Overview:
This 207-nucleotide RNA was probed chemically with 2A3 and DMS. Values cover nucleotides 27 to 156. It was measured as part of the RMDB library M2RFPK. For DMS the reverse transcriptase was MarathonRT.
RNA sequence: GGGAACGACUCGAGUAGAGUCGAAAAAGUUCGCGCUUCCGUGAAACGCGAAAAUCGGACGGUGGCUGCAAGUCGCAUCGCAAAACCGCGGCAAGUCGAGUUAGCGAGAGGAGGCUGGGUUUUGGCUAGAACACACGGUACUUCGGUACCGUGUGAAUCGAAAUUUCUAGUUCGCUAGAAAUUUCGAAAAAGAAACAACAACAACAAC
Reactivity to 2A3 in 0.01 (KOAc 150mM, MgCl2 10mM, bicine 150mM(pH8.5), 24C), signal-to-noise 4, nucleotides 027 to 156: a000g080u060u030c010g000c010g010c060u090u070c040c040g130u110g100a120a070a020c040g000c010g010a060a010a000a070u140c050g040g010a010c020g000g060u040g020g050c050u050g000c080a070a040g010u030c020g010c050a060u060c030g000c080a050a040a040a020c060c030g040c010g060g010c090a110a030g040u130c040g010a030g080u060u060a050g040c030g030a050g000a030g090g020a020g040g000c060u040g030g010g000u010u040u050u090g040g000c010u030a020g070a200a000c000a000c000a000c000g010g000u000a000c010u010u070c170g060g010u010a000c010c000g000u000g010u000g000a000a010
Reactivity to DMS in 0.01 (KOAc 150mM, MgCl2 10mM, bicine 150mM(pH8.5), 24C), signal-to-noise 2, nucleotides 027 to 156: a070g020u000u000c020g000c000g040c010u010u010c030c190g050u000g030a040a030a020c030g010c000g000a030a010a090a110u010c030g000g020a050c080g030g020u000g010g000c000u000g000c030a080a110g030u000c030g020c040a140u010c050g000c040a050a080a130a110c070c080g000c000g020g010c050a090a170g000u000c030g020a080g020u000u020a220g000c020g000a090g000a130g010g010a100g000g020c010u000g010g000g010u000u000u000u000g000g000c050u020a110g010a110a220c000a010c010a000c000g020g010u000a000c000u000u000c260g090g030u020a000c000c000g000u000g000u020g010a010a070